An RNA of 177 nucleotides, treated with 2A3 and read out base by base.
The reactions ran in a buffer of 150 mM KOAc, 10 mM MgCl2 and 150 mM bicine (pH 8.5), at 24 C.
2A3 adducts were read by reverse transcription with SuperScript II with manganese.

RNA sequence: GGGAACGACUCGAGUAGAGUCGAAAACAAACAAAAGGGGCCACAGAAGAAGAGUUCAGGUCACGGCCCCUAACGGACUCUGGUGAGUCCGCAAACUGAACUCUUCAAGACGAGGAAGACUCGUCAACUGGAGCACGUAGUUCGCUACGUGCUCCAGAAAAGAAACAACAACAACAAC
Reactivity to 2A3 in 0.01 (KOAc 150mM, MgCl2 10mM, bicine 150mM(pH8.5), 24C), signal-to-noise 1, nucleotides 027 to 126: c000a000a210a000c050a010a050a090a070g000g000g000g000c000c000a040c040a220g300a300a000g000a000a000g000a070g000u000u000c000a010g000g120u060c080a050c100g000g000c000c000c000c000u020a000a000c010g040g000a000c000u000c000u140g220g110u300g090a000g010u010c000c000g000c000a130a220a000c000u010g000a000a000c000u020c000u000u080c000a000a000g000a000c000g000a000g010g010a150a000g010a110c000u000c000g000u010c010a000a000